[RMDB]
RNA sequence: GGGAACGACUCGAGUAGAGUCGAAAAGCUUAUAAUUGGCCCACUUCUAAAAAUGUUAAAAUUGCUUCUAGAAUAGGCAUUCCAUACUCAACAUUUCAAACAAUUCAACCCGUAUCAGAUGCACCUAAUAAUGGUAUAGGUCAAAUAACUUUUAAUCUGGUGAACAUGAAUUCGUUCAUGUUCACCAAAAAGAAACAACAACAACAAC
Reactivity to 2A3 in 0.01 (KOAc 150mM, MgCl2 10mM, bicine 150mM(pH8.5), 24C), signal-to-noise 2, nucleotides 027 to 156: g000c020u220u180a040u070a260a000u270u040g040g020c000c020c020a050c060u100u250c030u140a180a100a040a020a030u090g030u090u010a080a070a100a100u180u110g030c030u070u040c050u080a110g020a300a250u080a060g020g000c000a030u080u100c000c010a030u150a100c010u030c030a020a040c050a080u050u140u060c080a080a110a070c030a130a100u260u040c010a030a020c010c000c040g070u080a040u050c030a010g000a050u050g040c030a060c000c010u040a110a140u140a110a010u130g040g010u010a030u100a030g030g010u000c000a150a000a000u060a090a000c000u000u120u140u170a130a050u090c040
This 207-nucleotide RNA was probed chemically with 2A3. Values cover nucleotides 27 to 156. It was measured as part of the RMDB library OK3TST. The 2A3 profile rests on 495 reads. The RNA was probed in 150 mM KOAc, 10 mM MgCl2 and 150 mM bicine (pH 8.5) at 24 C.